[RMDB]
RNA sequence: GGGAACGACUCGAGUAGAGUCGAAAAGAUAUGGAAAUACUACCCACCUUAUGGCGGUCGAAGAACUCUGUUUAAUCGGAAACGAUUAAACAGAGGGAGACCGAACAUAAGAGGUAUUUCCUAAGUCGGAGAUAUAUCUGUUCGCAGAUAUAUCUCCAAAAGAAACAACAACAACAAC
Reactivity to DMS in 0.01 (KOAc 150mM, MgCl2 10mM, bicine 150mM(pH8.5), 24C), signal-to-noise 2, nucleotides 027 to 126: g030a160u010a170u000g000g020a000a010a020u000a030c010u000a130c000c000c050a300c180c010u000u000a010u010g010g020c010g030g000u010c030g000a150a160g000a100a230c000u000c000u000g010u000u010u010a000a020u000c000g030g000a100a090a240c000g020a000u000u000a010a000a020c000a000g010a020g000g020g000a070g010a000c000c000g000a030a060c000a010u000a010a000g010a090g010g010u000a010u000u000u000c000c000u010a120a200g010u020c170
Reactivity to 2A3 in 0.01 (KOAc 150mM, MgCl2 10mM, bicine 150mM(pH8.5), 24C), signal-to-noise 2, nucleotides 027 to 126: g110a060u300a260u300g000g010a000a030a000u010a010c020u250a280c020c010c010a020c030c020u020u010a000u010g000g020c020g040g000u030c000g160a300a040g020a070a060c000u040c010u000g010u000u000u000a000a000u000c020g010g000a110a070a040c010g000a000u010u000a000a000a000c010a000g000a000g000g000g000a000g020a000c000c000g010a090a030c010a000u010a000a020g000a000g040g000u000a000u010u010u010c030c000u000a090a020g300u280c250
Structure probing data (DMS and 2A3) for a 177-nucleotide construct.
For DMS, 1,624 sequencing reads were counted.
The 2A3 profile rests on 4,900 reads.
It was measured as part of the RMDB library TTRINS.
Conditions: 150 mM KOAc, 10 mM MgCl2 and 150 mM bicine (pH 8.5), 24 C.